Structure probing data (2A3 and DMS) for a 177-nucleotide construct. Reactivities are given for positions 27 through 126. For DMS the reverse transcriptase was MarathonRT.
RNA sequence: GGGAACGACUCGAGUAGAGUCGAAAAGUAUGCCCCUUUCCUUUGAACGGAAUAUUAAAAGCUAUGUGCAGUAACUUUUAAUAGGCAUACCACUUUUGCAUCAAGCUAUAAAUAAUCGCAUACUUUGACAGUGAUAUGUGUUCGCACAUAUCACUGUAAAAGAAACAACAACAACAAC
Reactivity to 2A3 in 0.01 (KOAc 150mM, MgCl2 10mM, bicine 150mM(pH8.5), 24C), signal-to-noise 2, nucleotides 027 to 126: g000u000a000u010g020c000c010c030c060u030u000u000c010c000u200u120u180g050a090a020c050g000g020a010a000u020a010u010u020a000a020a000a010g000c010u020a010u060g020u010g000c020a020g020u030a020a010c000u000u010u000u000a030a000u030a030g000g000c010a000u000a020c030c000a100c070u150u200u120u060g000c020a030u090c080a170a120g000c030u130a070u130a290a200a070u170a110a050u150c070g000c100a020u040a190c030u040u010u040g050
Reactivity to DMS in 0.01 (KOAc 150mM, MgCl2 10mM, bicine 150mM(pH8.5), 24C), signal-to-noise 2, nucleotides 027 to 126: g020u000a030u000g000c010c020c150c110u010u010u000c020c020u000u010u020g020a110a120c300g010g010a030a040u010a010u000u000a000a000a020a020g030c010u000a020u010g010u020g010c040a180g020u000a050a030c000u000u000u000u000a010a010u000a030g000g000c000a020u000a010c070c120a110c070u010u000u000u000g010c000a030u010c190a080a140g000c090u010a050u020a040a110a110u000a050a100u000c130g000c040a030u000a080c070u010u000u010g000
The reactions ran in a buffer of 150 mM KOAc, 10 mM MgCl2 and 150 mM bicine (pH 8.5), at 24 C. It was measured as part of the RMDB library RFMREP. The 2A3 profile rests on 1,452 reads.